Source information: The data come from the RNA Mapping Database (RMDB), library M2PK50. The record gives the reactivity of an RNA of 177 nucleotides to DMS and 2A3.
[RMDB]
RNA sequence: GGGAACGACUCGAGUAGAGUCGAAAACUUCUGGUGUUCGCACCAGAAGAAAACCGUACUCGAGGCGCCAGUCGAGAGAUAUUGUGGCUGUUCCCAGCCGGAAAACCGCUCCCUUCGGGGAGCGGAACAACAUAAGACAGUUCGCUGUCUUAUGUUGAAAAGAAACAACAACAACAAC
Reactivity to DMS in 0.01 (KOAc 150mM, MgCl2 10mM, bicine 150mM(pH8.5), 24C), signal-to-noise 6, nucleotides 027 to 126: c000u000u000c000u010g000g010u000g010u000u010c220g030c010a000c000c000a010g010a010a000g000a020a050a060a060c030c040g000u000a010c010u000c010g000a080g000g000c120g010c100c090a060g010u000c020g000a220g000a150g000a040u000a060u000u010g010u000g000g010c000u000g010u000u000c000c010c000a300g010c110c100g010g000a080a040a090a120c010c000g000c000u000c000c000c000u010u010c200g030g010g010g010a000g020c010g000g000a010a040
Reactivity to 2A3 in 0.01 (KOAc 150mM, MgCl2 10mM, bicine 150mM(pH8.5), 24C), signal-to-noise 4, nucleotides 027 to 126: c000u000u000c000u000g000g010u010g030u050u080c200g040c080a000c000c000a000g000a000a000g000a010a010a000a000c020c000g020u020a010c010u010c000g030a000g150g090c070g010c060c010a010g060u050c040g020a040g000a010g010a130u030a050u210u260g080u110g050g000c030u020g010u000u000c010c000c000a000g050c060c010g060g020a060a100a020a050c010c000g010c010u000c000c000c020u010u060c150g050g000g000g000a000g000c000g000g000a000a000